[RMDB]
RNA sequence: GGGAACGACUCGAGUAGAGUCGAAAAGAGCGCGAGUUGUACCGUAAUCGGGUAAAUAGGGAUGCAACGAGUUGAAGCAGCACAUUCAUAAUUGAUUGUGUUGCGAACUAAACAUGCCGAAGCGCGAGGGUAAACUAUAGUUCGCUAUAGUUUACCCAAAAGAAACAACAACAACAAC
Reactivity to DMS in 0.01 (KOAc 150mM, MgCl2 10mM, bicine 150mM(pH8.5), 24C), signal-to-noise 9, nucleotides 027 to 126: g010a190g010c000g020c000g000a100g010u000u010g010u020a060c010c000g010u020a110a100u030c090g000g000g000u010a020a060a100u010a180g000g000g000a020u000g000c080a080a110c300g000a030g010u000u010g010a120a140g000c000a010g000c000a000c000a000u000u000c010a050u040a120a150u050u020g000a010u000u000g010u000g010u000u000g000c000g000a020a000c010u000a060a140a200c020a010u000g010c010c010g000a100a110g000c010g000c010g000a190
Reactivity to 2A3 in 0.01 (KOAc 150mM, MgCl2 10mM, bicine 150mM(pH8.5), 24C), signal-to-noise 8, nucleotides 027 to 126: g090a010g010c020g000c020g010a060g070u020u030g050u080a050c000c000g050u080a070a140u280c080g050g020g020u060a050a060a040u140a070g020g020g020a000u040g010c040a050a090c120g080a020g040u050u060g160a220a030g000c010a000g010c000a000c000a010u020u020c000a020u040a300a160u300u090g010a010u000u000g000u000g010u000u000g000c020g000a000a000c000u010a020a020a000c020a000u110g160c000c020g070a110a020g010c020g000c020g010a090